[RMDB]
RNA sequence: GGGAACGACUCGAGUAGAGUCGAAAAGGCAUUUAUUGCCAAGGAAUUGUCUCACUACGACGUGAAGGUACUAGUGCUAGACAAAGAGAAUGAUUUCGCCAAUCAGACCACCAUGGCAAACAGCGCGCGUGCGUAGUUUUUUCGAAAACUACGCACGAAAAGAAACAACAACAACAAC
Reactivity to 2A3 in 0.01 (KOAc 150mM, MgCl2 10mM, bicine 150mM(pH8.5), 24C), signal-to-noise 2, nucleotides 027 to 126: g020g030c010a000u020u080u240a200u190u210g010c000c040a000a020g080g030a060a200u040u010g000u030c010u010c030a010c010u080a040c100g070a000c020g110u170g170a160a080g160g000u030a080c010u000a020g000u000g060c120u080a010g020a010c000a000a050a000g120a020g020a070a040u080g000a040u020u100u100c050g000c040c010a000a010u030c000a020g080a040c000c010a010c000c010a040u020g010g050c000a060a110a040c050a030g100c000g000c020g000
Reactivity to DMS in 0.01 (KOAc 150mM, MgCl2 10mM, bicine 150mM(pH8.5), 24C), signal-to-noise 2, nucleotides 027 to 126: g020g010c000a040u010u020u010a080u030u000g010c010c000a080a120g020g000a250a170u020u000g000u000c000u000c000a000c000u000a000c270g030a070c100g020u000g000a120a160g030g010u030a140c260u000a010g020u020g000c150u000a000g000a040c020a030a050a130g010a160g000a020a140u000g010a060u000u000u000c180g000c110c140a090a030u000c040a010g040a220c090c030a110c000c010a100u030g000g030c030a040a030a080c140a090g000c070g000c090g010
The data come from the RNA Mapping Database (RMDB), library OK2TST.
An RNA of 177 nucleotides, treated with 2A3 and DMS and read out base by base.
The RNA was probed in 150 mM KOAc, 10 mM MgCl2 and 150 mM bicine (pH 8.5) at 24 C.
DMS adducts were read by reverse transcription with MarathonRT.